[RMDB]
RNA sequence: GGGAACGACUCGAGUAGAGUCGAAAAAGAUCCCGACCAGGAGUACUACCCCAUGACGACGGCCAUAACGCGUGAGCUGCGCCUAGAGGCCGAGAAUCUAGAUCGACAAGUUUUUGGGCUGCCUUUAAAAAUUAUGGUACUUCGGUACCAUAAUUUUAAAAGAAACAACAACAACAAC
Reactivity to DMS in 0.01 (KOAc 150mM, MgCl2 10mM, bicine 150mM(pH8.5), 24C), signal-to-noise 3, nucleotides 027 to 126: a160g000a150u000c010c000c010g010a100c080c060a070g000g000a070g010u000a050c060u000a230c020c020c010c020a090u000g010a030c030g010a280c010g000g000c020c000a080u000a070a160c240g000c040g030u000g000a110g010c150u010g010c020g010c030c020u010a080g010a130g000g000c000c020g000a030g000a110a090u000c020u010a040g000a110u010c070g010a060c060a070a100g010u000u000u000u000u010g010g010g020c040u000g010c080c020u000u010u000a070
Reactivity to 2A3 in 0.01 (KOAc 150mM, MgCl2 10mM, bicine 150mM(pH8.5), 24C), signal-to-noise 1, nucleotides 027 to 126: a030g090a070u030c020c000c000g000a040c010c050a050g030g050a030g020u040a110c040u080a040c010c000c040c020a020u070g010a020c040g020a000c020g000g000c010c000a040u070a170a010c020g020c000g020u030g070a130g100c090u120g000c070g000c010c010u060a060g040a110g020g000c000c010g020a030g000a010a010u060c010u020a090g020a150u050c030g030a050c030a100a060g000u030u020u040u130u050g020g000g000c040u050g020c000c020u040u280u180a030

Conditions: 150 mM KOAc, 10 mM MgCl2 and 150 mM bicine (pH 8.5), 24 C. An RNA of 177 nucleotides, treated with DMS and 2A3 and read out base by base. DMS adducts were read by reverse transcription with MarathonRT. 2A3 is a SHAPE reagent: it acylates the 2'-hydroxyl of flexible nucleotides of all four kinds. For DMS, 2,922 sequencing reads were counted. It was measured as part of the RMDB library OK2TST.